[RMDB]
RNA sequence: GGGAACGACUCGAGUAGAGUCGAAAAGGGACUGGCCCGAUGAAGCCCGGCAAGCUAACUUUAUUUAAGCGUAAAGUGAAGGUGCUAAUUCCAGCAAAAUGGUGUAUUCCGUUUUGGUAGAUAAGAGAAGCGUGACAUGAGUUCGCUCAUGUCACAAGAAUGCCUGUUAGUUCGCUAACAGGCAUUCAAAAGAAACAACAACAACAAC
Reactivity to DMS in 0.01 (KOAc 150mM, MgCl2 10mM, bicine 150mM(pH8.5), 24C), signal-to-noise 2, nucleotides 027 to 156: g010g030g000a050c030u020g010g020c020c000c020g000a130u000g000a190a100g000c020c030c060g020g010c040a090a070g000c020u010a110a040c010u000u010u000a030u000u000u000a090a130g020c300g040u000a020a020a050g010u000g010a110a090g010g000u010g010c040u000a070a130u010u000c010c020a050g040c020a030a020a020a040u010g000g030u000g030u000a130u010u000c010c000g020u000u000u000u000g000g030u000a020g000a140u010a100a100g010a130g000a070a110g010c100g040u010g000a000c010a010u000g000a050g010u000u000c300g000c000u010c010a000u010g000u000c000a020c000a000a080
Reactivity to 2A3 in 0.01 (KOAc 150mM, MgCl2 10mM, bicine 150mM(pH8.5), 24C), signal-to-noise 4, nucleotides 027 to 156: g010g000g010a020c020u040g020g060c000c000c040g010a040u090g040a060a030g030c000c000c000g000g040c020a020a030g000c010u030a010a040c010u000u040u040a070u060u190u160a160a070g110c050g040u010a000a010a000g010u020g040a080a010g040g010u010g000c000u010a040a050u120u040c040c020a010g020c020a040a000a000a030u030g000g020u130g040u160a100u160u060c010c000g010u010u010u020u040g030g010u090a120g040a200u140a200a060g050a020g060a150a030g100c050g050u000g000a000c000a000u000g000a000g020u060u110c190g030c070u000c000a000u000g000u000c000a000c000a000a000
The record gives the reactivity of an RNA of 207 nucleotides to DMS and 2A3.
Conditions: 150 mM KOAc, 10 mM MgCl2 and 150 mM bicine (pH 8.5), 24 C.
DMS (dimethyl sulfate) methylates the pairing face of unpaired adenines and cytosines.
DMS adducts were read by reverse transcription with MarathonRT.
The data come from the RNA Mapping Database (RMDB), library M2RFPK.